[RMDB]
RNA sequence: GGGAACGACUCGAGUAGAGUCGAAAAUCCUAAGUCGACUUGGAUUUACCUACGAAAUGUACACGGGAGAAAGCUCGGAAACGAGCUUUCAUCGAUCGUGUACGUAGUAGUAGGUUGUCAGUCGAUAUGGAAAAACGUUCAGCUUCGGCUGAACGAACCCUCGGAAGUAGUUCGCUACUUCCGAGGGAAAAGAAACAACAACAACAAC
Reactivity to 2A3 in 0.01 (KOAc 150mM, MgCl2 10mM, bicine 150mM(pH8.5), 24C), signal-to-noise 1, nucleotides 027 to 156: u020c000c000u010a100a060g040u010c000g000a000c020u080u230g270g000a080u300u230u120a040c000c000u000a000c010g010a020a020a020u100g020u000a000c000a000c000g000g020g000a010g000a010a000a000g000c010u000c000g060g010a050a090a010c000g010a000g000c000u000u000u020c010a020u100c000g040a060u030c000g020u000g000u000a000c000g000u000a000g000u000a000g000u000a000g010g000u000u000g010u000c000a000g010u000c000g000a000u000a110u130g090g000a000a000a110a100a010c000g000u000u000c030a010g000c060u130u070c210g150g020c010u040g000a010a010c000g000a020a020

Conditions: 150 mM KOAc, 10 mM MgCl2 and 150 mM bicine (pH 8.5), 24 C.
Chemical mapping of a 207-nucleotide RNA with 2A3.
Values cover nucleotides 27 to 156.
For 2A3 the reverse transcriptase was SuperScript II with manganese.
Source: RMDB library RNAMAK, as collected in RNAgym.
The 2A3 profile rests on 1,426 reads.